[RMDB]
RNA sequence: GGGAACGACUCGAGUAGAGUCGAAAACCCAGGUCGGACCGCGAGGAGGUGGAGAUGCCAUGCCGACCCGAAGAGGAAGAAGAGGACAUGGACGCGAACCGUGAGUGGAACCCUCGAUCCUUUAUUGCCGCACAACAGUUCGCUGUUGUGAAAAGAAACAACAACAACAAC
Reactivity to DMS in 0.01 (KOAc 150mM, MgCl2 10mM, bicine 150mM(pH8.5), 24C), signal-to-noise 9, nucleotides 027 to 129: c000c020c030a100g000g030u030c060g010g000a110c010c060g000c070g040a090g000g000a050g020g040u010g010g000a030g010a020u080g000c060c040a070u010g030c000c000g020a100c040c020c040g050a100a080g000a070g000g000a020a000g010a050a050g010a040g040g030a040c100a050u050g000g000a080c080g010c060g000a040a070c020c020g010u010g010a040g040u010g000g000a080a110c050c040c000u000c020g020a080u010c030c010u010u060u040a080u020u040g010c050c020g000
Reactivity to 2A3 in 0.01 (KOAc 150mM, MgCl2 10mM, bicine 150mM(pH8.5), 24C), signal-to-noise 9, nucleotides 027 to 129: c000c000c010a010g030g060u050c030g030g030a080c010c020g020c030g030a070g020g010a020g000g030u080g020g010a090g010a040u140g050c040c010a040u100g010c010c010g020a030c000c010c010g050a060a030g010a020g040g010a010a020g010a020a010g020a020g000g000a010c020a050u060g020g010a020c030g010c030g040a030a020c010c010g030u050g030a030g010u060g010g030a040a060c010c000c000u010c020g040a080u080c010c000u100u150u050a150u140u230g080c050c030g050